The data come from the RNA Mapping Database (RMDB), library OK3TST.
This 207-nucleotide RNA was probed chemically with 2A3.
RNA sequence: GGGAACGACUCGAGUAGAGUCGAAAAGCAAUUCGAAAUCCGACUUAUCUCAUAGUGACAAUGAAACAGGACAUUUUUAUAGCAACUUUUUUUCUCAGGUGAUGGAGUUAAAUGCCUCUGUGACUAUUUCUGGCAUUCCUGUAUGUAUCAGAAGUAAUCGACGAUAUCAGUUCGCUGAUAUCGUCGAAAAAGAAACAACAACAACAAC
Reactivity to 2A3 in 0.01 (KOAc 150mM, MgCl2 10mM, bicine 150mM(pH8.5), 24C), signal-to-noise 1, nucleotides 027 to 156: g000c020a000a040u140u130c050g080a070a000a070u050c010c010g060a010c000u180u160a120u020c030u100c080a050u050a050g080u040g020a030c020a000a040u100g100a080a000a000c040a000g020g020a000c020a110u070u040u020u120u140a270u190a080g060c010a110a080c000u180u040u000u140u090u300u040c050u020c020a000g080g070u040g020a050u040g010g060a020g040u040u110a060a160a030u080g000c010c070u090c050u020g020u070g000a000c010u000a000u030u000u000c040u040g000g000c050a050u020u070c010c040u060g020u020a000u040g000u020a020u070c000a000g010a050a000g170u250a060a130
The 2A3 profile rests on 314 reads. The RNA was probed in 150 mM KOAc, 10 mM MgCl2 and 150 mM bicine (pH 8.5) at 24 C.